[RMDB]
Conditions: 150 mM KOAc, 10 mM MgCl2 and 150 mM bicine (pH 8.5), 24 C.
An RNA of 207 nucleotides, treated with DMS and 2A3 and read out base by base.
Reactivities are given for positions 27 through 156.
It was measured as part of the RMDB library M2RFOK.
2A3 adducts were read by reverse transcription with SuperScript II with manganese.
For DMS, 3,559 sequencing reads were counted.
RNA sequence: GGGAACGACUCGAGUAGAGUCGAAAAUGGGCUACCAGUAAGCGAAAAAUGAUACAGGACGAAAAAAACAUAAUUCGAGAUCUUUCAGGAUGGAUUUUUUUAGGUAUCUAUCAAAACUAUUCUGAUGCAACGUAGAGCACGUUCGCGUGCUCUACAAGCAUUAAAUGUCGUUCGCGACAUUUAAUGCAAAAGAAACAACAACAACAAC
Reactivity to DMS in 0.01 (KOAc 150mM, MgCl2 10mM, bicine 150mM(pH8.5), 24C), signal-to-noise 2, nucleotides 027 to 156: u000g000g010g000c050u000a160c030c030a110g040u000a060a100g000c050g010a000a030a090a130a120u010g010a110u000a080c010a100g010g070a080c060g000a000a000a030a050a060a070a150c020a070u010a030a130u000u000c080g000a140g000a080u000c040u000u010u000c000a020g010g000a050u000g000g000a020u000u000u000u000u000u000u000a030g030g010u010a080u010c010u030a040u010c060a030a030a020a030c020u000a050u000u000c010u000g000a040u000g010c060a070a090c160g010u000a020g000a010g040c000a010c000g010u000u000c300g000c020g090u000g000c020u010c000u000a010c010a030a130
Reactivity to 2A3 in 0.01 (KOAc 150mM, MgCl2 10mM, bicine 150mM(pH8.5), 24C), signal-to-noise 5, nucleotides 027 to 156: u050g010g030g000c010u040a060c020c020a030g040u090a020a040g030c020g060a100a060a010a010a030u100g030a030u050a080c060a060g090g020a030c040g040a060a030a000a010a010a060a000c080a060u170a080a080u110u070c040g030a020g020a130u030c040u020u110u020c020a000g010g000a010u010g050g010a070u010u010u010u000u010u030u060a040g060g010u130a060u160c010u020a010u010c020a000a010a000a040c010u030a020u050u020c000u020g020a020u040g060c030a060a070c100g010u000a000g000a000g000c000a000c000g010u030u030c120g010c000g050u000g000c010u010c000u000a000c000a000a000

For DMS the reverse transcriptase was MarathonRT.